[RMDB]
RNA sequence: GGGAACGACUCGAGUAGAGUCGAAAAUGCUGUCGUUGACAGCGCCCAACGCUUCACAACCUGAAAGAAGCGCCUGUUAUCAGGUCGGUUGAUCCAUUUACCGGUGCAGACCUCUGCAAACACCGGGUUUAACAAGCAUCUUUCGAGAUGCUUGUAAACAGAAAUCAGAGUUCGCUCUGAUUUCUGUAAAAGAAACAACAACAACAAC
Reactivity to DMS in 0.01 (KOAc 150mM, MgCl2 10mM, bicine 150mM(pH8.5), 24C), signal-to-noise 1, nucleotides 027 to 156: u000g010c000u010g030u000c010g000u010u010g000a060c020a010g020c010g030c060c040c010a040a050c030g020c020u000u000c010a140c030a100a100c040c020u010g010a150a190a300g010a080a050g010c000g030c010c050u000g000u000u000a170u000c010a000g020g020u010c070g020g000u000u000g000a150u010c100c040a240u000u000u000a110c010c020g020g020u020g000c010a150g000a260c160c110u010c110u010g000c070a180a170a040c000a020c010c000g000g000g000u000u000u000a090a050c010a060a000g000c000a000u000c000u000u000u000c220g020a040g000a020u000g010c000u000u000g000u010a020a040
Reactivity to 2A3 in 0.01 (KOAc 150mM, MgCl2 10mM, bicine 150mM(pH8.5), 24C), signal-to-noise 2, nucleotides 027 to 156: u140g000c000u010g030u030c080g300u110u300g000a000c000a000g000c000g030c000c000c000a020a030c050g020c000u000u000c040a050c010a200a000c000c000u010g010a030a040a010g000a020a000g020c000g040c000c000u130g040u220u130a180u300c000a000g000g010u030c000g000g040u000u000g030a050u090c060c020a060u050u110u220a140c000c020g000g000u020g000c010a030g130a300c040c160u170c100u090g030c050a030a120a000c040a010c010c000g000g000g000u000u190u120a040a000c000a000a000g000c000a000u020c000u020u080u110c210g150a070g010a010u000g000c020u000u000g000u000a000a000